[RMDB]
RNA sequence: GGGAACGACUCGAGUAGAGUCGAAAACCUAGGUCGUUCGCGACCUAGGAAAUAAAAUCAGCGGUAAAUAUCGAGGCGUUAUUACCGCUGAACGCCUCGAUAAAAGUUCUAUGUUCGCAUAGAACAACUACCGUUCAAUGUUCGCAUUGAACGGUAGAAAAGAAACAACAACAACAAC
Reactivity to DMS in 0.01 (KOAc 150mM, MgCl2 10mM, bicine 150mM(pH8.5), 24C), signal-to-noise 2, nucleotides 027 to 126: c030c000u000a000g010g010u000c000g010u010u010c210g030c000g010a000c010c000u020a000g000g000a000a040a020u010a070a050a060a100u010c130a040g020c030g010g010u000a050a100a150u010a020u010c010g000a030g010g010c010g040u000u000a070u010u010a060c030c030g000c080u010g000a020a000c010g000c010c000u000c040g030a020u000a010a040a050a070g010u000u000c000u000a010u010g000u000u020c210g020c020a000u000a000g000a020a000c000a130a150
Reactivity to 2A3 in 0.01 (KOAc 150mM, MgCl2 10mM, bicine 150mM(pH8.5), 24C), signal-to-noise 2, nucleotides 027 to 126: c000c000u000a010g000g010u000c010g000u010u050c180g030c010g090a000c000c000u000a000g000g020a010a030a000u120a010a060a020a080u060c050a010g040c010g080g040u080a060a120a110u080a090u020c020g000a010g030g000c010g010u040u010a070u120u090a030c000c000g000c030u000g000a000a000c010g020c000c000u000c000g010a000u040a030a090a000a030g000u000u020c000u000a000u000g020u030u090c180g030c090a000u000a010g000a000a010c000a000a020